RNA sequence: GGGAACGACUCGAGUAGAGUCGAAAAGGGGUCAAUAUGAUGGGAGGCUAUGAAGUUGAACUACACCUGAAGCCUCCACGGGUGCAAUGGAGCCUCCUAAGUAUUGACGGAGGCACCCAAACGAUAUUGCGAAGUAUUCGUACUUCGCAAUAUCGAACGUUUCUCCCUUGUUCGCAAGGGAGAAACGAAAAGAAACAACAACAACAAC
Reactivity to 2A3 in 0.01 (KOAc 150mM, MgCl2 10mM, bicine 150mM(pH8.5), 24C), signal-to-noise 1, nucleotides 027 to 156: g100g010g000g000u020c000a000a000u070a040u080g120a120u300g020g010g010a030g000g020c000u080a300u300g060a020a000g060u040u030g050a040a040c080u180a070c240a010c000c000u010g010a050a010g000c000c000u000c000c000a000c020g010g010g010u040g020c000a020a040u030g000g000a010g000c000c010u000c000c000u020a070a020g020u010a000u000u000g000a010c000g010g000a000g010g000c000a040c010c000c010a030a100a000c000g000a000u000a000u000u010g010c010g000a000a000g000u000a030u020u280c300g040u060a040c000u000u000c010g000c000a020a000u000a000u000c000g010a040a000
An RNA of 207 nucleotides, treated with 2A3 and read out base by base. The reactions ran in a buffer of 150 mM KOAc, 10 mM MgCl2 and 150 mM bicine (pH 8.5), at 24 C. It was measured as part of the RMDB library RNAMAK.